[RMDB]
RNA sequence: GGGAACGACUCGAGUAGAGUCGAAAACAUACGGACUUCGGUCCGUAUGAAAGAACCUCAAAUUGACGCAAACUUCCGCGUCAUCGCCAGGAAGCGAGGAAAAAAUCGAGGUGUUCGCACCUCGAAACAAUCCCUUGGACUUCGGUCCAAGGGAUUGAAAAGAAACAACAACAACAAC
Reactivity to 2A3 in 0.01 (KOAc 150mM, MgCl2 10mM, bicine 150mM(pH8.5), 24C), signal-to-noise 1, nucleotides 027 to 126: c000a010u010a000c000g000g000a010c000u050u060c210g090g000u000c000c010g020u020a000u000g000a000a000a010g040a030a030c000c010u040c050a100a130a050u110u100g030a000c000g010c020a020a180a180c210u230u070c080c040g000c000g000u020c010a010u000c010g000c020c000a120g120g110a050a010g060c040g000a000g000g000a060a130a070a000a000a000u020c010g000a020g000g000u010g020u020u030c120g060c080a000c000c000u000c000g000a000a000a000
Reactivity to DMS in 0.01 (KOAc 150mM, MgCl2 10mM, bicine 150mM(pH8.5), 24C), signal-to-noise 1, nucleotides 027 to 126: c010a000u010a000c000g000g010a000c000u000u010c190g000g010u000c010c000g000u000a000u000g000a060a100a180g000a090a100c040c030u000c130a060a080a200u010u000g010a030c000g000c020a060a140a120c120u000u000c120c060g000c000g010u010c030a030u000c110g040c020c100a070g000g000a070a030g000c070g010a020g010g010a000a030a060a050a090a110u000c000g000a010g000g020u000g000u010u020c200g000c000a010c010c020u000c010g000a030a060a070
This 177-nucleotide RNA was probed chemically with 2A3 and DMS. Values cover nucleotides 27 to 126. The 2A3 profile rests on 1,622 reads. 2A3 adducts were read by reverse transcription with SuperScript II with manganese.